[RMDB]
RNA sequence: GGGAACGACUCGAGUAGAGUCGAAAACGACUUACCUUCGGGUAAGUCGACAUAGGUGAGUUCAUCGGAUAGCUGCCUAGCUGAGUUCAUCGGAUAGCUGCCACAUGUAACGGUUCGCCGUUACAAACCUUUGAGGGUGAUUCGUCACCCUCAAAGGAAAAGAAACAACAACAACAAC
Reactivity to DMS in 0.01 (KOAc 150mM, MgCl2 10mM, bicine 150mM(pH8.5), 24C), signal-to-noise 3, nucleotides 027 to 126: c010g020a010c000u000u000a000c000c000u000u000c270g030g010g000u000a000a020g020u010c000g000a040c170a080u010a070g000g010u000g000a080g010u000u000c090a040u010c050g010g010a110u010a090g000c030u000g000c070c060u000a100g030c060u010g010a050g010u000u000c110a020u000c030g020g000a070u000a040g000c020u000g030c040c050a080c200a100u020g010u000a010a020c010g000g020u000u010c290g000c000c000g020u000u000a000c000a030a060a110
Reactivity to 2A3 in 0.01 (KOAc 150mM, MgCl2 10mM, bicine 150mM(pH8.5), 24C), signal-to-noise 2, nucleotides 027 to 126: c010g000a000c000u000u010a010c000c010u020u050c220g050g000g010u020a010a000g000u000c010g000a000c020a060u200a070g010g020u050g170a070g020u020u090c050a020u030c100g070g030a040u060a040g000c000u050g150c010c050u030a070g000c090u040g030a030g030u040u060c040a020u040c060g060g000a050u040a030g000c030u030g010c000c010a080c030a100u100g010u010a000a000c000g000g020u030u050c220g050c070c000g000u000u000a000c000a020a010a020
The record gives the reactivity of an RNA of 177 nucleotides to DMS and 2A3. For DMS, 2,133 sequencing reads were counted. DMS adducts were read by reverse transcription with MarathonRT. Conditions: 150 mM KOAc, 10 mM MgCl2 and 150 mM bicine (pH 8.5), 24 C. Reactivities are given for positions 27 through 126.